[RMDB]
RNA sequence: GGGAACGACUCGAGUAGAGUCGAAAAGAUAUGGAAACCAACUCGCACUAUACGCUCGGAAACGAGCGUACGAAUGAACUACGAGCUGGUUUCCUAAGUCAAAGAAACGUCGUUCGCGACGUUUCAACUACUAGUGGGGGUUCGCCCCCACUAGUAGAAAAGAAACAACAACAACAAC
Reactivity to DMS in 0.01 (KOAc 150mM, MgCl2 10mM, bicine 150mM(pH8.5), 24C), signal-to-noise 2, nucleotides 027 to 126: g010a010u020a180u020g000g000a010a010a030c010c000a010a000c010u010c010g000c060a100c130u020a260u000a000c000g010c000u000c010g000g000a050a050a110c000g010a000g010c000g010u000a000c080g010a070a100u000g010a110a090c170u000a170c010g010a010g020c040u000g000g000u000u000u000c000c010u000a000a070g010u000c000a070a120a080g000a020a000a010c000g030u000c000g000u000u010c180g020c010g030a010c000g010u000u000u000c000a090a170
Reactivity to 2A3 in 0.01 (KOAc 150mM, MgCl2 10mM, bicine 150mM(pH8.5), 24C), signal-to-noise 1, nucleotides 027 to 126: g000a020u030a010u040g000g000a010a000a010c010c000a010a000c010u000c020g050c060a170c080u000a010u000a050c000g010c000u010c000g000g000a040a050a020c010g000a000g040c000g000u020a000c000g090a030a150u240g050a170a120c130u160a050c300g000a000g000c010u010g000g000u000u000u000c010c000u000a000a010g010u000c040a180a040a120g020a000a000a000c000g010u010c000g000u060u100c300g000c010g170a000c000g000u000u000u000c010a000a030
Source: RMDB library TTRDEL, as collected in RNAgym.
This 177-nucleotide RNA was probed chemically with DMS and 2A3.
Reactivities are given for positions 27 through 126.